[RMDB]
RNA sequence: GGGAACGACUCGAGUAGAGUCGAAAAGGCUGCGCGCCCUUCGGCCAGGCCGGGAGCCGCGCCAGUCGGAGCCCCCGGCCCAGCGUGGUCCGCCUCCCUCUCGGCGUCCACCUGCCCGGAGUACUGCUGAAUAGGGUCAGUUCGCUGACCCUAUUCAAAAAGAAACAACAACAACAAC
Reactivity to DMS in 0.01 (KOAc 150mM, MgCl2 10mM, bicine 150mM(pH8.5), 24C), signal-to-noise 2, nucleotides 027 to 126: g000g000c010u000g010c090g000c020g000c140c000c050u000u020c020g010g040c020c090a160g050g000c010c000g000g000g000a040g010c130c040g000c040g000c060c070a020g020u010c030g000g030a170g000c010c030c010c050c030g000g020c110c080c070a010g010c060g000u000g000g000u010c210c010g010c010c020u000c020c040c000u000c040u000c040g000g000c000g000u000c010c020a040c020c010u000g000c300c000c000g000g000a110g030u020a070c040u000g030c210
Reactivity to 2A3 in 0.01 (KOAc 150mM, MgCl2 10mM, bicine 150mM(pH8.5), 24C), signal-to-noise 2, nucleotides 027 to 126: g020g000c040u020g020c050g000c020g050c050c010c010u080u130c020g030g010c020c080a070g050g060c010c010g000g010g010a040g000c050c070g010c010g040c040c010a010g080u080c000g000g020a050g050c010c000c000c010c000g000g000c010c010c000a040g000c050g080u070g010g010u020c000c060g000c020c000u080c010c000c000u040c040u020c020g020g000c020g000u050c020c020a020c050c010u050g020c000c000c010g010g010a030g030u070a080c030u040g040c030
The record gives the reactivity of an RNA of 177 nucleotides to DMS and 2A3. For 2A3 the reverse transcriptase was SuperScript II with manganese. For DMS the reverse transcriptase was MarathonRT. High DMS reactivity at an A or C suggests that its Watson-Crick edge is free.